[RMDB]
RNA sequence: GGGAACGACUCGAGUAGAGUCGAAAACGUAGCUCUUUUACGCCAAACCAAUGCAGUAUUUCUCAAUUAAUUGAAAUGGGCUUUACUCAAAAUGCUAGCGUGCGCGCCCUAUUUAACACCGGAAACACAUCAGCAUACCAUUCGUGGUAUGCUGAUGAAAAGAAACAACAACAACAAC
Reactivity to 2A3 in 0.01 (KOAc 150mM, MgCl2 10mM, bicine 150mM(pH8.5), 24C), signal-to-noise 2, nucleotides 027 to 126: c020g040u050a010g000c000u080c080u060u100u170u070a000c010g020c000c040a100a020a030c020c010a030a030u080g020c020a030g020u060a050u030u120u000c020u000c030a120a210u120u250a110a130u090u150g050a070a050a090u060g010g030g000c000u030u050u040a040c040u020c040a040a050a020a070u130g010c010u020a030g070c010g010u030g020c060g000c020g010c000c020c000u010a080u020u110u060a110a070c030a030c040c000g020g020a040a060a000c100a020
Reactivity to DMS in 0.01 (KOAc 150mM, MgCl2 10mM, bicine 150mM(pH8.5), 24C), signal-to-noise 2, nucleotides 027 to 126: c040g050u000a070g050c140u000c070u020u040u000u000a060c100g000c040c040a070a090a180c090c070a090a100u000g010c060a020g040u030a070u000u000u010c020u000c050a060a060u000u000a070a160u000u010g000a030a060a110u000g000g000g010c040u010u000u000a060c010u000c050a030a070a100a090u000g000c050u000a090g020c100g030u000g010c030g000c080g020c010c030c050u010a080u000u000u010a010a080c110a100c040c000g010g010a040a080a090c230a120
The record gives the reactivity of an RNA of 177 nucleotides to 2A3 and DMS. High 2A3 reactivity points to a flexible backbone, as in loops and unpaired stretches. In probing experiments dimethyl sulfate is read out at A N1 and C N3, which are open when not base-paired. The RNA was probed in 150 mM KOAc, 10 mM MgCl2 and 150 mM bicine (pH 8.5) at 24 C.